Structure probing data (DMS and 2A3) for a 177-nucleotide construct. The data come from the RNA Mapping Database (RMDB), libraries RFM100 and RFMREP. For 2A3, 894 sequencing reads were counted.
RNA sequence: GGGAACGACUCGAGUAGAGUCGAAAAAGCUAUCGCCGGUACGCCGGCGAUAGCAAGCGAGUAAGACAGACUCUUCAGUCUGAUGUUACGGAGAUGAGUAGAACAAAGUGAGGGACUAUGGGUUAAAAAUUCCGUCACAUUUCGAUGUGACGGAAUUAAAAGAAACAACAACAACAAC
Reactivity to DMS in 0.01 (KOAc 150mM, MgCl2 10mM, bicine 150mM(pH8.5), 24C), signal-to-noise 2, nucleotides 027 to 126: a080g000c000u000a000u000c000g030c000c000g040g030u000a080c220g030c000c010g020g000c000g000a000u030a000g000c020a000a050g010c080g000a160g030u010a030a040g000a100c020a030g010a020c010u030c300u020u020c200a040g010u000c010u000g000a070u020g000u020u000a010c000g000g020a130g020a050u010g000a100g020u000a060g000a110a070c110a090a080a060g030u000g000a090g010g000g000a090c050u000a070u010g020g000g000u020u020a000a040a060
Reactivity to 2A3 in 0.01 (KOAc 150mM, MgCl2 10mM, bicine 150mM(pH8.5), 24C), signal-to-noise 2, nucleotides 027 to 126: a000g000c000u000a000u000c000g020c020c000g000g010u020a020c240g010c080c000g000g040c000g000a000u000a000g030c000a000a000g020c000g010a080g030u100a150a000g090a130c020a020g020a050c000u060c000u190u160c170a020g000u000c000u060g020a100u110g030u000u020a000c000g060g020a080g010a080u120g000a000g080u090a000g080a130a030c030a110a170a000g000u050g020a130g010g010g000a000c010u070a060u090g030g040g070u120u150a050a130a060
Background:
Conditions: 150 mM KOAc, 10 mM MgCl2 and 150 mM bicine (pH 8.5), 24 C.